[RMDB]
Background: Structure probing data (DMS) for a 177-nucleotide construct. For DMS the reverse transcriptase was MarathonRT. It was measured as part of the RMDB library M2PK90. Reactivities are given for positions 27 through 126. Conditions: 150 mM KOAc, 10 mM MgCl2 and 150 mM bicine (pH 8.5), 24 C.
RNA sequence: GGGAACGACUCGAGUAGAGUCGAAAAGCUCAGUGUGUGUCGCCCCGUCGUCUAGAGCUGGUUCUAGGGCUGGGGCGUCAGCAUCCAGGUCUGACGGGACGGGCAGUAUCUCGCCAUCAACGAUAAACGCUUAUUUGGAGUUCGCUCCAAAUAAGCGAAAAGAAACAACAACAACAAC
Reactivity to DMS in 0.01 (KOAc 150mM, MgCl2 10mM, bicine 150mM(pH8.5), 24C), signal-to-noise 1, nucleotides 027 to 126: g020c020u000c020a150g030u010g000u000g000u010g020u000c020g030c020c010c020c000g010u010c010g020u020c010u000a030g000a020g020c230u000g000g000u000u000c000u000a040g010g020g000c050u010g030g000g010g030c040g010u000c030a120g000c020a080u010c060c110a060g010g030u000c030u010g010a080c070g010g000g000a040c020g010g000g020c080a100g010u000a080u010c000u010c020g000c080c050a080u000c150a060a110c090g000a060u010a080a030a210